[RMDB]
RNA sequence: GGGAACGACUCGAGUAGAGUCGAAAACAGGAAUGAUUUUUUUUGAGAUGGAGUCUUACUUUGUCACCCAGGCUCCAGCACAGUGGCAUGAUCUUGCCUCAUGGCAACGUCUGCCUCCUGGGUUCAAUACGUAGGGAUGUUUCGACAUCCCUACGUAAAAAGAAACAACAACAACAAC
Reactivity to DMS in 0.01 (KOAc 150mM, MgCl2 10mM, bicine 150mM(pH8.5), 24C), signal-to-noise 1, nucleotides 027 to 126: c040a040g020g000a140a080u010g000a010u000u000u040u020u040u000u020u000g000a110g030a090u010g010g000a020g010u000c010u000u000a070c170u000u000u000g010u010c150a160c000c020c030a090g000g000c030u010c020c010a000g000c110a060c070a060g050u020g000g000c010a020u000g020a000u010c300u000u000g010c010c000u010c170a090u010g010g010c020a000a000c260g010u000c010u000g000c000c020u000c150c040u000g000g000g000u000u000c070a050a130
Reactivity to 2A3 in 0.01 (KOAc 150mM, MgCl2 10mM, bicine 150mM(pH8.5), 24C), signal-to-noise 1, nucleotides 027 to 126: c010a000g060g160a080a120u070g100a150u250u070u070u000u000u130u300u200g120a160g000a070u070g010g010a010g050u000c010u050u060a140c040u180u180u080g120u120c020a020c040c000c000a000g030g000c010u000c010c000a000g020c040a020c020a000g000u040g000g020c030a010u240g020a010u030c010u020u010g000c000c000u080c110a150u170g000g000c000a000a000c010g000u000c000u000g000c010c000u000c000c010u000g000g000g000u000u020c040a040a000

An RNA of 177 nucleotides, treated with DMS and 2A3 and read out base by base. Conditions: 150 mM KOAc, 10 mM MgCl2 and 150 mM bicine (pH 8.5), 24 C. As a SHAPE reagent, 2A3 marks flexible, mostly unpaired nucleotides at the ribose 2'-OH. Values cover nucleotides 27 to 126. The 2A3 profile rests on 758 reads. For DMS, 1,531 sequencing reads were counted. DMS adducts were read by reverse transcription with MarathonRT.